[RMDB]
Conditions: 150 mM KOAc, 10 mM MgCl2 and 150 mM bicine (pH 8.5), 24 C. An RNA of 177 nucleotides, treated with DMS and 2A3 and read out base by base. The DMS profile rests on 4,723 reads. 2A3 adducts were read by reverse transcription with SuperScript II with manganese. It was measured as part of the RMDB library OK1LIB.

RNA sequence: GGGAACGACUCGAGUAGAGUCGAAAAACGCGAGGUCUGCGACAGCCGCUCUCAAGCUUCAGACCAACGGCGGUGUGUCUGCUGACUUGCGCAGACAGACGGGUGUCUCCCGGAAACACGGGACACCAGCGUAUUACCUGUUCGCAGGUAAUACGCUAAAAGAAACAACAACAACAAC
Reactivity to DMS in 0.01 (KOAc 150mM, MgCl2 10mM, bicine 150mM(pH8.5), 24C), signal-to-noise 4, nucleotides 027 to 126: a180c130g000c010g020a080g000g000u010c010u000g000c030g010a010c040a200g000c020c010g000c010u020c130u050c250a100a120g000c070u000u060c180a150g020a100c070c020a170a150c300g000g000c000g000g000u000g000u060g000u000c010u000g110c040u010g000a010c000u000u010g020c020g000c070a100g000a110c130a020g000a120c200g000g000g010u000g000u020c140u030c010c010c000g040g000a110a060a140c180a080c070g000g010g010a090c000a000c010c000
Reactivity to 2A3 in 0.01 (KOAc 150mM, MgCl2 10mM, bicine 150mM(pH8.5), 24C), signal-to-noise 5, nucleotides 027 to 126: a000c030g010c000g010a010g010g140u010c000u020g020c020g000a020c010a000g010c000c000g020c030u060c010u020c090a120a110g020c040u230u250c110a100g060a240c000c040a010a000c000g000g010c020g000g000u190g020u050g000u080c110u240g000c010u010g020a000c000u030u120g050c020g000c020a010g050a030c040a020g070a020c110g070g000g000u030g010u020c110u010c040c010c000g000g020a130a200a020c170a040c060g000g000g000a000c000a000c000c000